[RMDB]
RNA sequence: GGGAACGACUCGAGUAGAGUCGAAAAGAACACUGAACCUCUAUCUUCUAUGAUUCAAAAAACUAUAACUAUGGUGGAAAAAAUCAAGGGUGAUACUAAGGAUGCUGUGAACUUAGAUCUCAAUAAGGUUUCUAAACUACUUCGGUAGUUUAGAAACAAAAGAAACAACAACAACAAC
Reactivity to DMS in 0.01 (KOAc 150mM, MgCl2 10mM, bicine 150mM(pH8.5), 24C), signal-to-noise 1, nucleotides 027 to 126: g000a170a280c080a000c090u000g000a110a190c030c030u000c070u000a070u000c010u000u000c030u000a070u000g030a020u000u000c010a000a070a130a140a070a010c070u000a000u000a130a150c150u000a030u040g000g000u000g030g000a000a000a070a030a030a050u000c000a050a300g000g000g000u010g010a040u000a040c050u000a010a040g000g000a120u000g030c040u000g030u050g020a030a200c000u000u000a080g000a160u000c030u000c010a020a120u000a060a090g000
Reactivity to 2A3 in 0.01 (KOAc 150mM, MgCl2 10mM, bicine 150mM(pH8.5), 24C), signal-to-noise 1, nucleotides 027 to 126: g000a040a010c050a000c030u050g000a060a070c030c010u010c020u020a010u010c060u130u000c020u110a220u110g040a030u050u110c060a030a020a010a030a160a120c040u090a140u060a190a100c070u060a040u160g040g000u000g020g000a060a150a030a030a080a000u030c010a040a050g140g000g000u080g020a000u010a080c030u060a030a090g050g010a000u140g060c040u000g000u020g040a020a020c000u000u000a050g040a170u000c030u060c040a040a170u150a000a070g100

Structure probing data (DMS and 2A3) for a 177-nucleotide construct. For 2A3 the reverse transcriptase was SuperScript II with manganese.